This 207-nucleotide RNA was probed chemically with DMS and 2A3.
Source: RMDB library OK3TST, as collected in RNAgym.
Conditions: 150 mM KOAc, 10 mM MgCl2 and 150 mM bicine (pH 8.5), 24 C.
RNA sequence: GGGAACGACUCGAGUAGAGUCGAAAAAUGGGAAACAAUUGCCAUCUGCCGACUGCCAGACCUCAGUUGCUUUUGCUUUUGCUUUUGCUCUGCUGUUGCUCUUGCUGUUGCUGCCACUGAAAUUGCUGAGCUGAGGCACAAACUUUUAUUGCAUUGAAGUGAGGAUUUAUUUCGAUAAAUCCUCACUAAAAGAAACAACAACAACAAC
Reactivity to DMS in 0.01 (KOAc 150mM, MgCl2 10mM, bicine 150mM(pH8.5), 24C), signal-to-noise 2, nucleotides 027 to 156: a090u000g020g010g000a110a070a090c040a070a100u010u020g030c050c040a060u000c030u000g050c040c020g020a090c050u000g000c030c020a090g020a100c070c030u010c020a090g020u000u000g000c010u000u000u000u010g000c050u010u000u010u000g010c030u000u000u000u000g000c020u000c050u000g030c000u010g010u000u000g010c020u000c030u000u000g020c010u010g040u000u010g030c010u000g040c010c040a150c040u000g000a060a060a120u000u000g020c030u000g000a150g040c030u000g010a130g030g020c030a050c080a050a070a090c070u010u010u000u000a100u010u020g020c030a170u010u000g020a210
Reactivity to 2A3 in 0.01 (KOAc 150mM, MgCl2 10mM, bicine 150mM(pH8.5), 24C), signal-to-noise 5, nucleotides 027 to 156: a000u060g010g010g050a060a090a060c070a070a160u140u130g030c030c020a040u050c030u060g030c040c010g060a060c020u020g020c010c020a050g040a110c000c030u030c010a040g020u050u050g030c010u030u070u070u120g020c010u000u070u130u140g020c050u040u050u080u070g030c010u020c050u070g040c000u020g060u100u050g020c020u020c020u040u030g010c020u030g030u070u050g000c030u020g020c020c010a040c010u010g030a030a060a120u110u090g020c030u030g010a010g020c020u030g010a030g020g000c020a000c010a010a040a000c010u070u080u130u160a130u230u140g050c090a050u040u050g090a060